RNA sequence: GGGAACGACUCGAGUAGAGUCGAAAACCAAGAGACGGAUGACUUUCCCCCAUUGGUUGGGAAAAGUCCCGGAACCAGGAAAUGGGAAAGAGACGGUAGAAAAGAGCGAGCCUCCCAGUUUUCGAGUGACCAUCAGCCUUCGGGCUGAUGAAAAGAAACAACAACAACAAC
Reactivity to 2A3 in 0.01 (KOAc 150mM, MgCl2 10mM, bicine 150mM(pH8.5), 24C), signal-to-noise 4, nucleotides 027 to 129: c000c000a020a010g060a000g000a010c050g000g020a080u130g010a080c020u000u000u030c000c030c000c000c040a120u100u300g100g060u100u070g030g000g000a030a060a020a020g030u020c000c010c010g030g030a000a000c020c000a020g000g050a000a060a090u090g030g010g030a000a110a010g060a020g000a010c060g010g030u110a040g100a050a080a020a000g070a020g040c030g010a010g020c000c000u000c020c010c000a040g020u010u000u010u090c090g050a090g020u050g040a080c020
Reactivity to DMS in 0.01 (KOAc 150mM, MgCl2 10mM, bicine 150mM(pH8.5), 24C), signal-to-noise 6, nucleotides 027 to 129: c030c010a090a050g040a090g070a150c080g040g000a090u050g020a070c000u020u010u020c050c040c010c060c090a190u020u080g030g040u130u040g020g010g060a040a040a040a140g010u060c010c060c020g000g000a100a090c110c080a110g020g010a040a070a070u100g020g030g000a030a060a030g020a090g010a080c070g040g050u020a030g040a040a050a070a010g040a100g000c110g010a000g010c000c000u030c060c030c000a080g010u030u020u030u030c000g010a110g030u020g010a180c020